[RMDB]
RNA sequence: GGGAACGACUCGAGUAGAGUCGAAAACGAGUAUCGGAUGUAGACUCAGGAUAAGAGAUGUCCCCAGCAGAAUAAGCAUCUAUUGGACAAUAGUAAAACCGGGAGACAUACUUUUGAUUAACAGCACCAGGUGAGUACUCUUCGGAGUACUCACCUGAAAAGAAACAACAACAACAAC
Reactivity to 2A3 in 0.01 (KOAc 150mM, MgCl2 10mM, bicine 150mM(pH8.5), 24C), signal-to-noise 2, nucleotides 027 to 126: c000g000a030g010u200a050u230c140g050g140a110u060g000u080a090g040a010c000u080c020a010g060g000a060u060a190a180g030a000g000a020u000g000u000c000c000c000c000a000g050c050a000g030a210a020u140a210a050g020c000a000u000c000u000a050u000u030g060g040a010c070a030a000u000a000g010u190a110a000a000a050c020c000g000g000g000a210g000a000c000a000u220a130c000u000u060u000u180g110a180u120u000a170a000c040a010g030c040a000c030
Reactivity to DMS in 0.01 (KOAc 150mM, MgCl2 10mM, bicine 150mM(pH8.5), 24C), signal-to-noise 2, nucleotides 027 to 126: c170g020a120g000u000a120u040c030g030g000a230u080g000u040a070g000a040c000u000c060a070g020g000a300u130a000a070g000a000g000a050u000g010u020c020c000c000c030a160g010c110a050g000a290a080u070a050a070g020c080a090u020c000u000a000u000u000g000g140a120c170a080a020u000a070g010u000a010a080a040a090c120c140g000g000g050a060g000a000c000a040u000a020c010u000u000u050u000g050a120u030u000a110a100c230a020g050c300a030c100
About this RNA
Structure probing data (2A3 and DMS) for a 177-nucleotide construct. Values are in units of 0.01, from 0 to 300, in steps of 10. For DMS, 1,060 sequencing reads were counted. For DMS the reverse transcriptase was MarathonRT.